[RMDB]
RNA sequence: GGGAACGACUCGAGUAGAGUCGAAAAUUACCGCCCAGGAUGGGGUGCAGCGUUCCUGCAAUAUCCAGGGCACCUAGGUGCAGCCUUGUAGUUUUAGUGGACUUUAGGCUCAAGAAUUUCACUAGCAAAAAUCUUUAAGGGUUCGCCCUUAAAGAAACCGUACCAUAAUGUUCGCAUUAUGGUACGGAAAAGAAACAACAACAACAAC
Reactivity to 2A3 in 0.01 (KOAc 150mM, MgCl2 10mM, bicine 150mM(pH8.5), 24C), signal-to-noise 2, nucleotides 027 to 156: u080u030a060c020c020g000c000c010c010a000g020g020a000u040g050g020g020g140u030g000c010a020g000c000g110u070u110c020c010u010g000c000a010a020u020a010u090c000c000a020g000g000g000c000a070c010c020u080a100g120g000u060g050c040a010g020c030c010u020u020g110u160a020g000u020u030u050u020a050g010u050g030g000a000c000u060u060u020a020g030g020c010u000c020a070a030g070a080a030u030u210u230c020a000c020u020a040g020c060a010a080a060a100a160u000c000u000u000u000a010a000g010g010g000u030u040c100g040c000c000c000u000u000a000a000a000g000a040a010a000